[RMDB]
RNA sequence: GGGAACGACUCGAGUAGAGUCGAAAAGCUCGUGGCUGCUGCUCCGGGUGGGGCUUGCAGGCUUCCGCUGUUCUGCAGAACACGGUGACGAACGCACCAGCUUGAAUUGGGCGCUUCCCUGAGCUGUUACCCCAUGGGGCUUGGCAGCACCCUUGGCAUAACCACUUCUAUUCGUAGAAGUGGUUAUAAAAGAAACAACAACAACAAC
Reactivity to DMS in 0.01 (KOAc 150mM, MgCl2 10mM, bicine 150mM(pH8.5), 24C), signal-to-noise 2, nucleotides 027 to 156: g010c030u000c060g030u010g010g020c030u000g000c030u000g020c000u000c010c020g030g020g060u020g030g010g010g030c030u000u000g040c060a110g040g020c070u000u000c000c030g010c090u000g020u000u000c000u000g040c220a260g000a030a040c040a060c000g000g000u000g010a100c020g000a060a090c050g030c020a140c090c000a060g000c110u010u010g010a050a140u010u000g010g000g000c070g010c040u000u000c020c020c040u000g010a080g030c010u000g010u000u000a090c030c020c000c020a060u020g020g010g020g020c020u000u010g020g050c030a050g000c040a060c020c010c020u000u010g030g050c170
Reactivity to 2A3 in 0.01 (KOAc 150mM, MgCl2 10mM, bicine 150mM(pH8.5), 24C), signal-to-noise 5, nucleotides 027 to 156: g030c020u040c130g080u110g080g000c010u000g020c010u030g000c010u030c000c020g130g030g100u140g000g040g000g000c060u100u180g030c050a070g130g000c010u150u050c010c000g020c200u020g010u020u050c040u160g180c120a110g000a020a000c000a000c010g000g040u040g030a080c050g020a020a000c000g000c050a300c080c010a020g020c050u190u290g090a130a120u110u060g020g000g020c040g050c170u030u010c010c020c070u030g020a010g020c000u010g040u050u090a040c010c000c000c030a080u200g010g000g000g000c060u130u190g060g060c020a010g000c000a050c020c000c000u040u100g050g020c070